[RMDB]
RNA sequence: GGGAACGACUCGAGUAGAGUCGAAAAGCUUAAUAACCUGCGCUGAGGCCUUCUCCCCCAGCUUGCCUGUGUCCUAGGGAAUUGGAAGGUCAUCCUUCACAGGAUCGUGUGGAAGUCCUGCUCGGGGUCCAAACAUGGUAAUUCGUUACCAUGUUAACCAAUGCUAAUAAUUCGUUAUUAGCAUUGGAAAAGAAACAACAACAACAAC
Reactivity to DMS in 0.01 (KOAc 150mM, MgCl2 10mM, bicine 150mM(pH8.5), 24C), signal-to-noise 3, nucleotides 027 to 156: g000c080u000u010a060a090u010a100a120c020c030u000g010c080g010c100u010g010a130g020g000c020c010u000u010c030u000c120c010c010c010c060a100g010c030u000u000g010c050c030u000g030u000g020u000c050c030u000a110g000g000g010a100a100u010u010g030g020a070a050g030g020u000c030a120u000c040c000u020u000c080a040c030a020g030g000a070u000c090g010u010g000u000g010g020a140a110g010u000c030c000u000g010c010u030c040g010g020g030g020u000c010c040a060a030a020c000a010u010g010g020u000a010a040u000u000c300g010u000u000a010c000c000a010u000g000u000u000a050a190
Reactivity to 2A3 in 0.01 (KOAc 150mM, MgCl2 10mM, bicine 150mM(pH8.5), 24C), signal-to-noise 5, nucleotides 027 to 156: g010c030u140u160a070a020u100a170a180c010c010u050g010c020g010c070u040g030a050g030g000c020c030u050u010c090u210c020c010c010c000c000a010g000c000u060u120g050c010c010u070g020u020g020u050c010c050u060a070g040g020g020a060a070u160u110g050g010a010a010g010g010u010c020a090u080c020c000u060u060c030a020c010a040g010g030a080u090c070g040u070g010u030g100g040a070a020g010u010c010c020u020g010c010u010c030g030g000g000g010u030c050c030a040a010a000c000a000u000g010g000u010a020a020u050u050c100g060u060u000a000c000c000a000u000g000u010u010a010a010